[RMDB]
RNA sequence: GGGAACGACUCGAGUAGAGUCGAAAAUUAACAGAAAUUCAGUUUUCACGUGUUUUCAGAUAAGUAAGGAUACUAAAAUUCAAUUAGGUGAAUUUGUGUUUGAGCAAUCUGAGUACGGUAGUGAUUCUGUUUAUUACAAGAGCACGAGUACUUACAAGCAAUCAUGUUAGUUCGCUAACAUGAUUGCAAAAGAAACAACAACAACAAC
Reactivity to DMS in 0.01 (KOAc 150mM, MgCl2 10mM, bicine 150mM(pH8.5), 24C), signal-to-noise 2, nucleotides 027 to 156: u010u000a100a110c040a100g000a020a080a070u000u000c070a080g000u010u010u010u010c020a060c040g020u000g030u000u010u000u000c030a030g000a110u000a020a210g010u010a040a300g020g010a070u000a040c040u000a040a030a070a030u000u000c030a020a210u010u000a130g010g030u010g040a010a020u000u000u000g040u000g040u010u000u000g000a300g000c000a150a060u000c040u000g020a050g010u000a010c010g000g010u000a060g040u020g010a050u000u000c020u000g040u000u000u000a080u040u030a060c060a050a080g010a040g050c030a050c030g020a210g000u000a070c070u020u000a040c100a060a220
Reactivity to 2A3 in 0.01 (KOAc 150mM, MgCl2 10mM, bicine 150mM(pH8.5), 24C), signal-to-noise 4, nucleotides 027 to 156: u030u010a010a000c000a010g060a050a070a050u150u060c020a020g100u050u040u110u120c140a170c040g050u070g000u070u130u110u040c010a010g000a010u050a240a030g030u030a040a030g040g000a000u020a010c010u110a100a050a070a070u000u000c020a010a120u160u110a220g290g030u120g020a010a000u000u010u010g000u000g010u000u020u040g000a020g000c030a050a000u000c020u020g000a000g020u020a000c020g000g040u070a030g100u030g010a030u000u000c000u000g000u000u010u010a050u030u060a040c060a100a040g020a050g110c080a020c170g050a030g040u050a090c030u070u070a040c020a080a040
Chemical mapping of a 207-nucleotide RNA with DMS and 2A3. The reactions ran in a buffer of 150 mM KOAc, 10 mM MgCl2 and 150 mM bicine (pH 8.5), at 24 C.